[RMDB]
RNA sequence: GGGAACGACUCGAGUAGAGUCGAAAAUAGGAAGGCUGAACGUAAGGCACGCUUGGAUCGUGAAGAGUUUCUUAAAGGAAGCCCCACUGUCAUUGAUCACAUCAGUAUAGCUGGUGGCGCGCAGCCUAACCGCAAACAUAUUCGUAUGUUUGCGGUUAAAAGAAACAACAACAACAAC
Reactivity to DMS in 0.01 (KOAc 150mM, MgCl2 10mM, bicine 150mM(pH8.5), 24C), signal-to-noise 4, nucleotides 027 to 126: u030a080g010g010a080a040g010g040c010u020g000a080a040c100g000u000a040a060g010g000c070a150c020g010c020u000u000g000g020a040u010c020g000u020g000a090a110g000a100g000u000u000u010c000u000u050a080a130a120g000g010a060a070g020c040c020c030c070a120c040u010g020u020c020a020u010u020g010a040u000c030a040c030a150u010c010a000g000u020a060u020a110g030c040u010g000g000u000g000g000c140g000c260g020c060a040g000c000c010u000
Reactivity to 2A3 in 0.01 (KOAc 150mM, MgCl2 10mM, bicine 150mM(pH8.5), 24C), signal-to-noise 6, nucleotides 027 to 126: u270a050g100g030a090a000g020g020c030u030g010a110a010c050g050u070a020a090g030g040c100a020c120g050c030u050u060g040g000a050u040c040g020u010g030a050a040g040a040g030u000u020u010c020u040u140a140a100a030g090g010a040a010g030c000c000c010c020a070c050u100g050u050c020a040u050u300g010a000u020c030a010c020a090u010c000a010g050u070a040u110a300g110c030u010g020g030u030g010g030c010g020c010g010c040a010g000c010c000u010

The record gives the reactivity of an RNA of 177 nucleotides to DMS and 2A3. For DMS the reverse transcriptase was MarathonRT. For 2A3, 5,152 sequencing reads were counted. The DMS profile rests on 7,740 reads. Values cover nucleotides 27 to 126. Conditions: 150 mM KOAc, 10 mM MgCl2 and 150 mM bicine (pH 8.5), 24 C.